An RNA of 177 nucleotides, treated with DMS and 2A3 and read out base by base.
DMS adducts were read by reverse transcription with MarathonRT.
2A3 adducts were read by reverse transcription with SuperScript II with manganese.

RNA sequence: GGGAACGACUCGAGUAGAGUCGAAAAGAAAUGUCUUCAAAUAUUUUACAGAGUUGGACUCUUCGCCGACACUGCCCUCCAAGGUUCACCCUGUUGGUGAUGACGGGAGAAGUGGCACUUGGAGCACCCCAUCCAUUCAGUUCGCUGAAUGGAUGGGAAAAGAAACAACAACAACAAC
Reactivity to DMS in 0.01 (KOAc 150mM, MgCl2 10mM, bicine 150mM(pH8.5), 24C), signal-to-noise 1, nucleotides 027 to 126: g020a030a050a050u020g080u000c100u030u060c140a100a160a000u000a010u070u010u000u000a150c010a040g000a160g040u000u000g000g010a040c070u020c040u000u060c100g010c030c000g000a060c060a010c010u000g030c160c010c000u030c000c040a030a070g000g000u000u010c010a050c000c000c050u000g010u020u000g000g000u060g020a050u160g000a020c000g000g000g000a090g000a060a160g040u000g060g000c040a040c010u000u020g000g000a040g050c300a100c200
Reactivity to 2A3 in 0.01 (KOAc 150mM, MgCl2 10mM, bicine 150mM(pH8.5), 24C), signal-to-noise 4, nucleotides 027 to 126: g020a000a080a030u150g000u010c050u090u050c070a010a120a040u150a200u130u160u080u080a090c090a080g090a050g100u080u080g030g020a090c020u000c020u230u070c160g030c090c030g000a010c080a050c060u090g040c010c000c000u000c000c000a000a000g050g010u080u140c000a000c000c000c010u020g010u080u060g120g280u180g060a190u300g010a020c020g000g030g010a100g040a260a130g030u020g010g000c050a070c200u000u010g000g020a000g000c010a050c000